[RMDB]
Structure probing data (DMS) for a 177-nucleotide construct. It was measured as part of the RMDB library M2PK50.
RNA sequence: GGGAACGACUCGAGUAGAGUCGAAAACAUUGGCAUUUCGAUGCCAAUGGGUCUGCGUCGCGCCGCCGCCGAGUCGUUCCCGCGGCCGCGUGACGCAGUUUGGGCAGCUCGAGUUCGCUCGAGCUAACGGGGGAUACUCAUUCGUGAGUAUCCCCCGAAAAGAAACAACAACAACAAC
Reactivity to DMS in 0.01 (KOAc 150mM, MgCl2 10mM, bicine 150mM(pH8.5), 24C), signal-to-noise 1, nucleotides 027 to 126: c000a000u000u000g000g020c010a000u000u010u010c210g030a030u000g000c000c000a000a000u000g000g000g000u000c000u000g010c010g010u000c000g000c000g050c010c300g020c010c020g020c020c190g000a150g000u000c010g000u000u000c000c010c020g070c010g010g010c000c270g010c020g040u000g010a010c000g020c000a010g020u010u000u000g020g020g000c190a020g000c000u010c000g000a000g030u000u030c200g000c020u000c000g010a030g000c000u000a010a030
DMS adducts were read by reverse transcription with MarathonRT. For DMS, 1,305 sequencing reads were counted. The reactions ran in a buffer of 150 mM KOAc, 10 mM MgCl2 and 150 mM bicine (pH 8.5), at 24 C.